[RMDB]
RNA sequence: GGGAACGACUCGAGUAGAGUCGAAAAUACGCACACAAGUUGAUUUAGCUAAAGAAGUCUUUUCUAUACCAGUAGAUAUUGCCUCACAACCUUUAGCCACUACUCUCAUAGGAGAACUUGCAAGCUACCGAUUUAUAUGGUUCGCCAUAUAAAUCGGAAAAGAAACAACAACAACAAC
Reactivity to DMS in 0.01 (KOAc 150mM, MgCl2 10mM, bicine 150mM(pH8.5), 24C), signal-to-noise 3, nucleotides 027 to 126: u030a070c090g000c140a060c130a120c150a020a040g000u000u010g000a110u010u010u010a080g000c050u010a040a040a110g000a060a050g020u000c010u000u010u000u000c010u000a010u000a100c210c170a030g000u020a000g000a080u030a050u040u000g020c020c020u020c150a050c080a080a060c180c030u010u020u000a050g000c050c080a080c040u000a050c020u020c050u000c070a060u050a130g010g000a000g000a030a110c030u000u000g000c050a110a050g000c040u000a040
Reactivity to 2A3 in 0.01 (KOAc 150mM, MgCl2 10mM, bicine 150mM(pH8.5), 24C), signal-to-noise 9, nucleotides 027 to 126: u090a010c040g020c010a010c000a010c000a060a050g030u030u040g140a220u110u140u200a020g030c010u060a050a050a030g080a090a020g040u040c040u010u070u020u000c010u010a030u010a090c030c040a040g030u010a000g070a030u110a040u120u120g040c020c000u080c020a100c030a060a110c010c010u040u050u050a010g020c010c020a060c040u120a060c010u000c000u010c050a070u090a070g100g010a030g030a040a020c010u010u040g020c060a070a020g010c000u020a050
An RNA of 177 nucleotides, treated with DMS and 2A3 and read out base by base. High DMS reactivity at an A or C suggests that its Watson-Crick edge is free. For 2A3, 10,929 sequencing reads were counted. The reactions ran in a buffer of 150 mM KOAc, 10 mM MgCl2 and 150 mM bicine (pH 8.5), at 24 C. 2A3 adducts were read by reverse transcription with SuperScript II with manganese.